[RMDB]
RNA sequence: GGGAACGACUCGAGUAGAGUCGAAAACGCACCAGCGAGGUAGGUGACUACCUCGGCUAGGUAAACCCCACUGGGAGCAAGGCAUUAGGGCGUACCGUCGUUUCAGACGGUAUGUCUGCACGAACGCGUUUAGUAUGAUGUUCGCAUCAUACUAAACAAAAGAAACAACAACAACAAC
Reactivity to 2A3 in 0.01 (KOAc 150mM, MgCl2 10mM, bicine 150mM(pH8.5), 24C), signal-to-noise 6, nucleotides 027 to 126: c060g030c020a010c010c000a000g000c000g000a000g000g010u000a000g020g080u100g080a130c000u010a000c000c000u000c000g010g010c010u040a060g000g010u070a060a050a040c010c020c000c010a050c080u120g010g030g050a070g040c050a080a060g100g000c040a050u080u260a110g060g000g000c000g000u010a000c000c010g000u010c010g020u050u220u230c070a050g010a000c000g000g000u000a000u000g000u000c000u000g000c020a020c050g100a140a020c070g010c020
Reactivity to DMS in 0.01 (KOAc 150mM, MgCl2 10mM, bicine 150mM(pH8.5), 24C), signal-to-noise 8, nucleotides 027 to 126: c160g020c210a070c010c010a030g020c000g000a010g020g020u000a000g000g010u020g000a300c000u000a000c010c000u000c000g010g010c020u000a060g040g000u000a040a090a140c080c010c000c070a110c150u000g010g000g010a090g010c050a070a080g000g010c040a110u010u000a120g000g000g010c000g020u000a000c010c000g010u000c000g010u010u020u010c280a130g000a010c000g000g000u000a000u000g010u000c000u010g010c140a080c110g010a070a090c190g010c160
Source information: An RNA of 177 nucleotides, treated with 2A3 and DMS and read out base by base. DMS adducts were read by reverse transcription with MarathonRT. For 2A3, 18,152 sequencing reads were counted. For DMS, 12,337 sequencing reads were counted. The RNA was probed in 150 mM KOAc, 10 mM MgCl2 and 150 mM bicine (pH 8.5) at 24 C.